An RNA of 207 nucleotides, treated with 2A3 and DMS and read out base by base.
For 2A3, 1,495 sequencing reads were counted.
The RNA was probed in 150 mM KOAc, 10 mM MgCl2 and 150 mM bicine (pH 8.5) at 24 C.
2A3 adducts were read by reverse transcription with SuperScript II with manganese.
RNA sequence: GGGAACGACUCGAGUAGAGUCGAAAAAAAUCGUGGGUCUAUCGGCUAGUGAAGUCCUUAAAACUGUGUGCAAGUUACACUACAAGGUUCGAGAGGUUAAUGGUGAAGAUAUUGUCAAGGUCAUUGAGAUACCAAGAAUACCAAGUAUCUCAGAUGGAUAUCAAUCAUCCUUCGGGAUGAUUGAUAUAAAAGAAACAACAACAACAAC
Reactivity to 2A3 in 0.01 (KOAc 150mM, MgCl2 10mM, bicine 150mM(pH8.5), 24C), signal-to-noise 3, nucleotides 027 to 156: a000a000a000u170c050g010u090g000g040g030u000c030u080a110u090c070g010g000c020u010a020g050u020g160a050a030g040u000c000c000u070u040a050a090a060a060c040u040g000u020g000u030g030c000a070a060g000u070u030a020c050a010c030u130a050c030a080a050g030g020u040u030c020g040a040g000a010g080g000u040u050a060a000u080g030g000u020g040a040a030g010a030u110a030u100u050g080u060c020a030a040g010g040u030c010a070u060u080g000a000g000a000u000a010c040c000a010a110g150a100a000u050a130c070c010a040a030g000u000a000u000c000u000c010a000g010a070u080g040g040
Reactivity to DMS in 0.01 (KOAc 150mM, MgCl2 10mM, bicine 150mM(pH8.5), 24C), signal-to-noise 2, nucleotides 027 to 156: a080a040a050u000c050g010u010g000g020g000u000c050u000a080u010c070g010g030c020u000a080g010u000g020a110a100g030u000c040c060u000u010a030a050a100a090c030u000g030u000g020u010g010c080a070a110g030u000u000a070c040a060c030u010a050c060a060a040g010g010u000u010c010g000a100g020a060g000g010u000u000a090a060u000g000g020u000g010a070a060g010a110u000a030u000u000g010u000c050a100a110g000g030u000c070a090u010u000g010a030g020a040u000a010c000c010a030a100g000a160a100u010a100c090c050a060a150g020u000a020u010c010u000c000a080g010a100u000g010g010